[RMDB]
RNA sequence: GGGAACGACUCGAGUAGAGUCGAAAACAUGCGGCAGAAGGCAGACGAGACCAGACAUACGCAGCCACUUGCGUUCGCCCGACGAGAUGAACUGGUCAAACACGACCUGCGCACCAUUGGCGAAGUAACGCGCUAGGGGAUUCGUCCCCUAGCGCGUAAAAGAAACAACAACAACAAC
Reactivity to DMS in 0.01 (KOAc 150mM, MgCl2 10mM, bicine 150mM(pH8.5), 24C), signal-to-noise 1, nucleotides 027 to 126: c100a130u000g000c180g020g080c000a020g000a080a090g010g000c030a030g000a070c050g020a250g030a050c010c020a040g000a140c130a190u010a090c040g000c020a080g040c060c150a030c080u020u000g000c060g000u000u020c030g000c080c020c050g000a110c200g000a120g020a080u000g000a050a090c020u000g000g020u010c000a120a050a130c210a140c150g060a130c000c010u000g020c250g000c070a100c040c080a100u030u000g000g030c010g020a020a070g000u020a060

Structure probing data (DMS) for a 177-nucleotide construct. The data come from the RNA Mapping Database (RMDB), library OK2TST.